RNA sequence: GGGAACGACUCGAGUAGAGUCGAAAAUCUCACCGUAAUUGUGACAAAGUUCAAGACCCAUACUCUCUGCGUUGUCAGCCACAGGUGAUGGGGGCUUGUCUGACCCAAAUGCGCCAAGCUGCUGAAGACGUUUAAUCUCAUUCGUGAGAUUAAACGUAAAAGAAACAACAACAACAAC
Reactivity to 2A3 in 0.01 (KOAc 150mM, MgCl2 10mM, bicine 150mM(pH8.5), 24C), signal-to-noise 3, nucleotides 027 to 126: u010c010u000c010a020c010c030g040u050a020a140u160u120g040u030g070a030c040a090a150a070g030u100u060c010a050a030g050a070c010c010c010a010u080a250c020u020c010u010c020u030g010c040g140u150u150g160u130c060a040g020c040c010a050c020a040g000g030u020g020a020u020g020g010g000g030g020c000u010u020g020u040c030u020g080a100c030c000c000a030a120a060u090g050c000g030c010c020a030a030g040c050u070g010c040u050g080a050a020g100
Reactivity to DMS in 0.01 (KOAc 150mM, MgCl2 10mM, bicine 150mM(pH8.5), 24C), signal-to-noise 6, nucleotides 027 to 126: u010c050u000c010a140c140c120g000u010a070a080u010u000g010u000g010a060c090a080a090a110g010u000u010c040a040a060g010a160c020c000c010a030u000a100c060u010c020u010c020u000g000c070g000u010u000g010u000c100a080g000c090c060a040c060a050g000g010u000g020a050u000g010g000g010g000g010c020u010u000g010u000c040u000g010a130c030c020c020a040a060a080u010g010c060g030c060c070a060a100g000c070u000g010c040u010g000a080a090g010